[RMDB]
RNA sequence: GGGAACGACUCGAGUAGAGUCGAAAAAAGGCCUGACCUGCUGUUACUGAGCAGGGUUGGACAGGAAGAAAAGUCCUGGCCACUCUCAGCCUCAGCUUCCUCAUCUGUAAAACCCAGUGUCCACCUCCAUAUCAUAGUGAGACAGUGAGGAUGGAAAAUUAAUACUGACCUUCGGGUCAGUAUUAAUAAAAGAAACAACAACAACAAC
Reactivity to 2A3 in 0.01 (KOAc 150mM, MgCl2 10mM, bicine 150mM(pH8.5), 24C), signal-to-noise 3, nucleotides 027 to 156: a000a020g030g010c000c030u060g030a130c010c010u030g000c010u060g030u240u090a110c060u130g030a000g000c020a020g070g020g010u070u060g000g010a000c000a010g060g010a030a040g140a140a250a010a020g080u010c000c000u010g000g010c000c000a020c000u040c000u030c040a000g010c020c000u010c040a020g020c010u050u030c000c010u030c020a130u080c020u070g100u120a010a010a090a130c000c000c020a000g030u050g060u100c000c070a050c010c040u080c040c030a080u040a120u300c030a030u040a110g080u080g100a130g020a050c050a040g050u050g100a010g020g020a030u040g020g000a050a090a070
Reactivity to DMS in 0.01 (KOAc 150mM, MgCl2 10mM, bicine 150mM(pH8.5), 24C), signal-to-noise 2, nucleotides 027 to 156: a050a060g010g010c040c050u010g020a140c050c050u000g030c010u000g030u000u000a130c040u000g000a010g040c250a100g000g010g000u000u000g020g000a020c000a020g000g000a040a120g020a140a090a150a270g000u000c000c000u020g000g010c010c000a060c040u010c000u000c030a080g010c090c020u020c020a070g000c010u000u000c040c000u010c020a100u010c090u000g000u000a070a060a130a080c010c010c020a240g030u000g000u000c020c020a040c050c000u000c030c040a140u000a120u000c060a160u000a150g000u010g000a260g020a070c050a070g040u000g010a060g020g010a060u000g020g000a090a050a070